[RMDB]
RNA sequence: GGGAACGACUCGAGUAGAGUCGAAAACGUUCGCUCCAAGCUGGGCUGUGUGCCGUUCAGCCCGACCGCUGCGCCUUAUCCGGUAACUAUCGUCUUGAGUCCAACCCGGUAAAGUAGGACAGGUGCCGUUACGUAUGUCCUUCGGGACAUACGUAACAAAAGAAACAACAACAACAAC
Reactivity to DMS in 0.01 (KOAc 150mM, MgCl2 10mM, bicine 150mM(pH8.5), 24C), signal-to-noise 2, nucleotides 027 to 126: c130g020u000u000c060g010c050u000c070c080a140a100g020c080u000g030g000g010c040u000g010u000g000u000g010c110c030g020u010u010c020a040g000c010c010c000g010a010c060c050g010c080u020g000c090g010c040c020u000u000a100u010c030c040g000g020u010a060a070c100u000a080u000c080g000u000c080u020u010g000a070g020u010c060c030a110a240c040c020c000g000g000u010a020a040a110g000u010a110g020g020a070c120a080g000g000u000g000c060c180
Reactivity to 2A3 in 0.01 (KOAc 150mM, MgCl2 10mM, bicine 150mM(pH8.5), 24C), signal-to-noise 2, nucleotides 027 to 126: c030g010u020u010c060g010c060u050c020c030a060a030g030c040u120g040g000g000c010u000g050u000g040u050g100c000c030g060u060u000c000a010g030c000c010c000g010a030c010c020g050c090u080g010c020g000c040c000u100u100a090u080c030c000g010g050u020a000a060c030u050a090u140c060g150u030c030u030u050g020a030g050u050c010c000a010a040c020c000c030g030g000u150a140a110a030g080u060a040g030g030a030c000a090g000g070u070g060c020c040